Description:
Source: RMDB library OK1LIB, as collected in RNAgym. Chemical mapping of a 177-nucleotide RNA with DMS and 2A3. DMS adducts were read by reverse transcription with MarathonRT.
[RMDB]
RNA sequence: GGGAACGACUCGAGUAGAGUCGAAAACCGUGCACUCUGGGAUAAGCUUGGGAAACUGGGUCUAAUACCGGAUAUGACGGCAUGCCGCAUGGUGUGUCGUGGAAAGAUUUAUCGGUGCACGAUGGGCAAUUUUAUUGAAAUUCGUUUCAAUAAAAUUAAAAGAAACAACAACAACAAC
Reactivity to DMS in 0.01 (KOAc 150mM, MgCl2 10mM, bicine 150mM(pH8.5), 24C), signal-to-noise 9, nucleotides 027 to 126: c050c010g010u000g010c000a000c010u000c010u000g000g000g010a020u000a110a210g000c010u000u000g000g010g010a100a080a160c000u000g000g000g000u000c010u000a190a090u010a010c000c000g000g000a020u000a010u010g010a020c010g000g010c000a000u000g000c000c000g010c270a110u050g010g030u000g010u000g000u000c000g010u000g000g000a010a010a010g020a030u010u020u020a060u010c000g000g000u000g000c000a010c000g010a100u030g010g010g010c200
Reactivity to 2A3 in 0.01 (KOAc 150mM, MgCl2 10mM, bicine 150mM(pH8.5), 24C), signal-to-noise 9, nucleotides 027 to 126: c010c000g000u000g000c000a000c000u010c010u010g010g000g000a020u010a030a010g010c010u010u020g010g000g010a030a060a040c000u010g010g000g030u020c010u040a020a020u040a100c000c000g000g000a000u010a010u040g050a000c000g000g000c000a000u010g000c000c000g230c300a240u300g000g000u010g000u000g000u000c000g000u000g000g010a000a010a000g010a010u090u210u170a240u200c010g000g000u000g000c000a000c000g000a020u090g030g030g040c050
The RNA was probed in 150 mM KOAc, 10 mM MgCl2 and 150 mM bicine (pH 8.5) at 24 C. In probing experiments dimethyl sulfate is read out at A N1 and C N3, which are open when not base-paired.